[RMDB]
RNA sequence: GGGAACGACUCGAGUAGAGUCGAAAACGGGGUACGAUGGAUAGUAAUGCUACUCCGGAGAUACAGUCCCGUACCCAUAGACUACGUGUGAGAUGUUCCGGAGUAGCAUUCUCGCAUACGUGGUCAAGGUACUCUUUGAUUUCGAUCAGAGAGUACCAAAAGAAACAACAACAACAAC
Reactivity to DMS in 0.01 (KOAc 150mM, MgCl2 10mM, bicine 150mM(pH8.5), 24C), signal-to-noise 8, nucleotides 027 to 126: c060g000g000g000g010u010a020c010g000a110u050g010g010a040u030a120g020u040a060a060u020g010c000u000a000c000u000c000c000g000g010a120g030a190u040a060c130a200g010u010c000c010c000g010u010a080c020c020c010a080u030a070g010a020c010u000a000c000g020u000g010u010g000a080g010a090u050g000u020u010c000c010g000g000a020g000u010a000g000c000a010u000u010c030u000c040g000c020a020u000a020c020g010u000g000g010u000c010a110a090
Reactivity to 2A3 in 0.01 (KOAc 150mM, MgCl2 10mM, bicine 150mM(pH8.5), 24C), signal-to-noise 9, nucleotides 027 to 126: c030g010g000g010g050u100a020c020g020a100u180g050g030a050u060a120g170u270a150a060u160g000c000u000a000c000u000c000c000g020g010a050g020a020u290a050c080a030g060u040c000c000c000g000u040a060c000c000c010a020u100a040g010a000c010u000a000c010g010u010g000u010g010a060g020a110u110g120u240u050c010c000g000g000a000g000u000a000g000c000a000u020u020c000u000c010g010c000a010u010a040c000g000u010g000g020u010c020a010a030